[RMDB]
RNA sequence: GGGAACGACUCGAGUAGAGUCGAAAAUACAAUGUUUCCAAGAGAGAAAAUGAUGCAAGUACUCACAAAGGAAACCAAACUCAGAGAGAAAGCAGAUGUAUCUGGAAUUGUGAGUUUUAUAUGAUAAUCACUACCAUGCUUUCGAGCAUGGUAGUGAAAAAGAAACAACAACAACAAC
Reactivity to DMS in 0.01 (KOAc 150mM, MgCl2 10mM, bicine 150mM(pH8.5), 24C), signal-to-noise 1, nucleotides 027 to 126: u000a130c120a150a030u000g000u000u030u000c000c080a090a260g010a200g020a030g000a000a070a080a070u000g030a100u000g020c070a020a140g020u000a070c000u000c030a030c090a060a050a110g000g010a030a040a150c010c160a010a030a060c070u000c020a160g000a110g000a080g000a120a060a090g010c130a040g000a060u000g010u000a020u000c040u000g000g010a040a040u000u010g000u000g000a070g000u040u000u040u000a150u030a040u030g000a110u000a060a140